Description:
An RNA of 207 nucleotides, treated with DMS and 2A3 and read out base by base. Source: RMDB library OK3TST, as collected in RNAgym. The reactions ran in a buffer of 150 mM KOAc, 10 mM MgCl2 and 150 mM bicine (pH 8.5), at 24 C.

RNA sequence: GGGAACGACUCGAGUAGAGUCGAAAAAUGAGUGCUCUUUUACUUAUAAGCCAAUUUGGUAGACACAACAUAUAACAAUAAGUGUUCAUACAAAUAAACACAUCUAGACAUGUAUGUAUACACACACACAAAUGAAAAUCCAGUAGUGUUUACCUUGGUAGGAUGUACGAUUCGUCGUACAUCCUACAAAAGAAACAACAACAACAAC
Reactivity to DMS in 0.01 (KOAc 150mM, MgCl2 10mM, bicine 150mM(pH8.5), 24C), signal-to-noise 1, nucleotides 027 to 156: a010u000g010a040g000u000g000c140u010c020u000u000u030u000a050c070u000u000a060u000a070a060g040c010c060a010a090u000u000u010g000g040u000a050g020a040c020a010c000a110a080c090a040u000a120u000a030a010c060a120a170u000a030a170g070u000g000u000u010c010a080u000a280c190a060a030a130u000a010a040a000c080a020c030a080u000c040u000a150g000a110c090a180u020g040u000a050u000g030u000a040u000a050c100a070c060a050c010a070c000a120c070a040a070a060u000g010a050a070a120a110u000c010c030a000g000u000a170g020u000g030u000u000u000a080c000c020u000u000g010
Reactivity to 2A3 in 0.01 (KOAc 150mM, MgCl2 10mM, bicine 150mM(pH8.5), 24C), signal-to-noise 4, nucleotides 027 to 156: a000u080g000a020g040u080g030c010u040c020u070u130u100u090a120c060u120u090a110u080a230a030g070c030c030a100a120u120u080u120g000g000u020a000g030a010c020a000c030a110a000c030a070u220a030u070a170a080c070a090a100u170a290a090g000u000g020u030u050c010a000u000a020c010a000a150a050u180a080a110a000c090a040c010a120u090c100u140a040g030a120c050a040u060g000u010a010u010g020u020a040u040a120c030a000c000a000c000a000c000a000c040a010a130a050u120g040a130a070a010a040u090c060c030a000g010u070a010g000u040g000u000u000u000a000c000c000u010u040g060